[RMDB]
RNA sequence: GGGAACGACUCGAGUAGAGUCGAAAAACGUCAUCAAGGAAGGUGCUAAGACAGCUCUGAAGGUGGAUCUCACACCCCAUGUGCCCCUAAAGAUGUGUGACAACACCAAUGCGAUAGCGGGCUUUCCGAGGUAUACCAACUUCGGUUGGUAUACCUCAAAAGAAACAACAACAACAAC
Reactivity to 2A3 in 0.01 (KOAc 150mM, MgCl2 10mM, bicine 150mM(pH8.5), 24C), signal-to-noise 4, nucleotides 027 to 126: a000c060g050u050c010a090u040c030a060a070g060g030a020a030g000g080u130g030c000u030a080a060g130a070c010a040g000c010u000c050u160g050a050a040g040g030u090g030g060a070u030c010u010c070a020c000a000c000c010c010c000a030u110g020u090g070c030c000c010c000u080a090a090a020g050a060u140g050u020g020u020g090a070c060a130a020c000a060c000c020a050a060u180g040c050g030a010u050a020g010c070g010g000g000c000u000u010u000c050c040
Reactivity to DMS in 0.01 (KOAc 150mM, MgCl2 10mM, bicine 150mM(pH8.5), 24C), signal-to-noise 4, nucleotides 027 to 126: a030c090g000u050c070a060u010c080a130a180g010g010a120a070g000g010u000g000c040u050a080a090g040a080c140a070g000c060u000c010u020g000a090a060g010g000u010g000g000a130u030c120u000c020a000c130a150c030c040c020c050a120u040g000u030g000c030c020c000c010u000a010a120a110g000a100u020g020u000g000u020g000a080c170a060a120c010a000c020c040a100a100u060g000c090g010a180u010a040g000c100g010g010g020c020u000u010u000c060c060